[RMDB]
RNA sequence: GGGAACGACUCGAGUAGAGUCGAAAAGGCUAUCAUGAUACAAUAUGGAAUUCAGUCUUCCCAGAUAUGGACUGGAAGCGGGUCAGGGCCGAGGAGUCACGUUUAUGUGAUAGAUUAACUUGUGUCAACGUUGCUGAAUCUUCGGAUUCAGCAACGUAAAAGAAACAACAACAACAAC
Reactivity to 2A3 in 0.01 (KOAc 150mM, MgCl2 10mM, bicine 150mM(pH8.5), 24C), signal-to-noise 1, nucleotides 027 to 126: g040g030c010u050a010u200c020a080u160g190a030u130a170c060a070a090u080a050u300g110g000a020a130u110u090c020a000g010u030c000u030u020c030c010c000a070g000a020u200a070u110g050g000a000c010u000g000g070a000a040g100c080g040g000g000u000c020a030g000g030g010c000c020g020a030g080g000a090g040u060c020a000c050g000u110u220u040a140u230g050u010g020a020u040a050g070a050u150u150a090a040c080u030u060g010u020g000u110c020a000
Reactivity to DMS in 0.01 (KOAc 150mM, MgCl2 10mM, bicine 150mM(pH8.5), 24C), signal-to-noise 2, nucleotides 027 to 126: g000g030c040u000a120u010c020a090u010g010a090u020a070c100a080a040u000a070u010g000g010a110a080u000u020c070a030g020u000c030u000u010c040c000c010a140g010a050u010a080u000g020g000a060c030u000g000g000a020a190g000c050g010g000g020u010c070a070g000g000g010c020c030g010a090g010g010a110g010u000c000a030c010g020u000u010u010a040u030g010u000g010a000u010a070g000a080u010u000a030a070c110u000u000g010u010g020u000c030a100
Structure probing data (2A3 and DMS) for a 177-nucleotide construct. Reactivities are given for positions 27 through 126. 2A3 adducts were read by reverse transcription with SuperScript II with manganese. The reactions ran in a buffer of 150 mM KOAc, 10 mM MgCl2 and 150 mM bicine (pH 8.5), at 24 C.